[RMDB]
RNA sequence: GGGAACGACUCGAGUAGAGUCGAAAAGGCCCAUGGGUGACCCUGGGAACAUUAACUGCCUCACAACGUUUGUGCCUCAGUUACCCGUAGAUGUAGUGAGGGUAACAAUACUUACUCUCGUUGGUGAGAUAUAUGUAAACUUCGGUUUACAUAUAUCAAAAGAAACAACAACAACAAC
Reactivity to 2A3 in 0.01 (KOAc 150mM, MgCl2 10mM, bicine 150mM(pH8.5), 24C), signal-to-noise 9, nucleotides 027 to 126: g080g020c010c000c020a040u130g010g000g020u110g070a090c020c020c050u040g010g010g010a040a020c010a010u090u110a040a050c040u090g040c020c010u060c010a040c020a040a060c050g030u030u060u060g040u050g030c010c000u050c020a020g000u010u020a030c000c010c020g040u120a110g020a220u200g080u190a090g090u060g200a060g010g010g000u010a000a010c020a050a060u160a090c030u050u020a010c000u010c000u000c030g010u010u020g020g030u040g020a040
Reactivity to DMS in 0.01 (KOAc 150mM, MgCl2 10mM, bicine 150mM(pH8.5), 24C), signal-to-noise 9, nucleotides 027 to 126: g010g010c010c000c010a070u010g010g000g010u020g010a110c040c050c070u000g000g010g000a100a070c080a080u010u010a060a080c060u010g010c050c030u000c090a050c050a060a060c080g010u000u000u000g010u000g010c060c030u010c160a130g000u000u000a030c020c010c010g010u010a100g010a120u010g010u010a090g010u020g010a080g010g000g000u000a010a010c130a090a120u030a080c230u010u000a020c010u000c010u000c010g010u000u000g000g010u000g000a090
Record summary: This 177-nucleotide RNA was probed chemically with 2A3 and DMS. The data come from the RNA Mapping Database (RMDB), libraries RFM100 and RFMREP. For 2A3 the reverse transcriptase was SuperScript II with manganese.